[RMDB]
RNA sequence: GGGAACGACUCGAGUAGAGUCGAAAACUCACGGAUUCGUCCGUGAGAAAAAGCGUACUACAGCCGGACUAUGAAGACAGGAACUACUGGUUCCCAAAUAGGAACCAGCCUGUUGGAGUUGGCUGUAUCGCAAAAAACUAGGAGUUCGCUCCUAGAACACUCAAAUUACGUUCGCGUAAUUUGAGUGAAAAGAAACAACAACAACAAC
Reactivity to DMS in 0.01 (KOAc 150mM, MgCl2 10mM, bicine 150mM(pH8.5), 24C), signal-to-noise 1, nucleotides 027 to 156: c000u010c000a020c000g030g000a050u000u000c300g020u000c010c010g000u000g000a010g000a000a100a130a090a270g000c000g030u000a050c090u000a010c000a050g020c030c000g040g040a030c000u000a190u020g010a230a300g000a010c000a040g000g000a110a120c070u010a300c030u000g000g030u000u000c010c000c010a000a040a210u010a080g000g010a060a020c000c000a010g000c030c000u000g010u000u010g000g000a110g050u010u010g000g020c020u000g000u000a000u000c030g000c040a000a050a050a130a050a070c010u010a020g000g010a080g020u010u010c300g030c030u000c010c000u000a010g000a150a240
Reactivity to 2A3 in 0.01 (KOAc 150mM, MgCl2 10mM, bicine 150mM(pH8.5), 24C), signal-to-noise 3, nucleotides 027 to 156: c000u000c000a000c010g000g010a020u050u080c190g100u070c100c000g000u000g020a010g030a050a020a000a010a000g020c040g030u070a070c070u000a000c020a000g010c000c010g230g020a010c030u100a130u300g050a040a020g000a010c000a000g020g000a050a030c060u170a030c000u300g000g010u010u000c010c030c000a190a300a210u290a160g000g000a000a000c000c000a000g000c000c000u000g000u000u000g000g000a000g000u020u020g010g000c000u000g000u010a000u030c010g000c000a060a070a000a010a020a080c000u000a000g000g000a000g000u060u130c160g080c070u000c000c000u000a000g000a020a000